[RMDB]
RNA sequence: GGGAACGACUCGAGUAGAGUCGAAAAGAUAUGGACAGUAGCACGACGUUAUCCCAGGACUAUGAAGCACUGGUCGGAAACGACCAGGUGUGGAGUCCAGGAUAACGUCGUGCUACUGUCCUAAGUCCACGUAAACUUACUUCGGUAAGUUUACGUGAAAAGAAACAACAACAACAAC
Reactivity to DMS in 0.01 (KOAc 150mM, MgCl2 10mM, bicine 150mM(pH8.5), 24C), signal-to-noise 2, nucleotides 027 to 126: g010a090u000a300u010g000g020a000c010a000g020u010a010g030c010a020c000g020a040c010g000u000u010a000u000c020c000c090a190g030g000a030c010u000a220u010g010a140a280g010c010a050c000u000g010g000u010c010g020g010a100a090a210c010g020a020c020c010a000g010g020u000g060u000g000g000a040g050u010c000c000a200g020g000a000u000a000a000c010g040u000c010g000u010g010c000u000a000c000u000g000u000c010c020u000a000a060g000u010c030